[RMDB]
RNA sequence: GGGAACGACUCGAGUAGAGUCGAAAAAAUCGUCGACGCAUCGACGACGGUCCUGCCAUGAGACCGUAACGAGGACAUGUCGCCUCGAAUGGCGUCGGGGAGCCGGCAGCUCACCCCAAGGAUGAGCAAAAGAAUGAAACGUUCGCGUUUCAUUCAAGUAUAUGUGGAUGUUCGCAUCCACAUAUACAAAAGAAACAACAACAACAAC
Reactivity to 2A3 in 0.01 (KOAc 150mM, MgCl2 10mM, bicine 150mM(pH8.5), 24C), signal-to-noise 7, nucleotides 027 to 156: a000a010u040c040g020u000c010g030a040c100g040c200a150u060c020g010a010c000g000a000c000g010g000u000c000c010u010g010c000c010a050u070g020a040g000a070c010c030g030u030a000a010c000g000a000g000g030a030c060a180u230g060u180c110g010c010c000u010c000g000a020a020u020g010g000c010g010u020c020g000g000g020g010a070g160c020c000g030g000c030a040g000c010u010c000a050c000c010c010c000a040a050g080g000a130u060g010a010g010c020a020a040a030a100g000a000a000u000g000a000a000a000c010g010u050u060c270g010c010g100u000u030u010c000a000u000u000c000a000a000
Reactivity to DMS in 0.01 (KOAc 150mM, MgCl2 10mM, bicine 150mM(pH8.5), 24C), signal-to-noise 2, nucleotides 027 to 156: a020a000u000c000g030u000c000g000a050c010g020c070a140u000c000g020a030c000g010a040c000g020g000u000c000c020u000g030c040c210a150u010g020a090g000a050c020c020g020u000a050a100c040g000a080g030g000a070c020a140u000g020u010c060g030c010c000u000c030g000a070a080u010g010g010c000g010u010c020g030g010g020g010a110g000c010c010g010g010c080a170g000c010u000c010a030c000c000c030c070a090a160g060g010a050u000g010a020g000c050a070a040a090a150g010a040a000u000g000a010a010a010c010g020u000u000c300g040c010g050u000u020u000c000a010u000u010c000a040a140
Chemical mapping of a 207-nucleotide RNA with 2A3 and DMS. The DMS profile rests on 5,494 reads. 2A3 adducts were read by reverse transcription with SuperScript II with manganese. Values are in units of 0.01, from 0 to 300, in steps of 10. High DMS reactivity at an A or C suggests that its Watson-Crick edge is free.